[RMDB]
RNA sequence: GGGAACGACUCGAGUAGAGUCGAAAAAAGAUAUGGAGAUGGACGAGCUGAUGACCCACAUGAAACUAUGGUCGGAAACGACCAUAGGAGUACGUGUGGCAAGGCUCGGUACAUCUCCUAAGUCAAACUUGAUUAGUAUGUUCGCAUACUAAUCAAGAAAAGAAACAACAACAACAAC
Reactivity to 2A3 in 0.01 (KOAc 150mM, MgCl2 10mM, bicine 150mM(pH8.5), 24C), signal-to-noise 6, nucleotides 027 to 126: a000a020g100a040u090a070u150g000g000a010g000a010u010g010g010a010c000g000a000g010c000u040g030a300u160g030a230c000c070c000a000c000a010u180g010a020a010a000c000u000a000u010g010g000u010c010g010g020a070a070a060c010g000a000c000c000a000u000a000g000g000a000g010u020a020c130g000u000g000u030g020g000c010a060a100g000g000c000u010c000g000g000u070a000c000a000u000c000u000c000c000u000a030a010g010u010c020a030a050a130
Reactivity to DMS in 0.01 (KOAc 150mM, MgCl2 10mM, bicine 150mM(pH8.5), 24C), signal-to-noise 9, nucleotides 027 to 126: a110a070g000a040u000a300u000g000g000a000g010a020u000g000g000a220c030g020a020g010c000u000g000a080u020g010a150c300c000c000a000c020a010u000g000a190a170a180c000u000a000u000g000g010u000c000g000g010a120a100a150c010g010a010c000c000a000u000a010g010g010a070g010u000a080c300g000u010g000u000g000g000c020a050a080g000g010c000u000c000g010g010u010a100c010a010u000c000u000c000c000u000a010a060g000u010c030a100a100a180

This 177-nucleotide RNA was probed chemically with 2A3 and DMS. 2A3 adducts were read by reverse transcription with SuperScript II with manganese. For DMS, 18,476 sequencing reads were counted. Values cover nucleotides 27 to 126.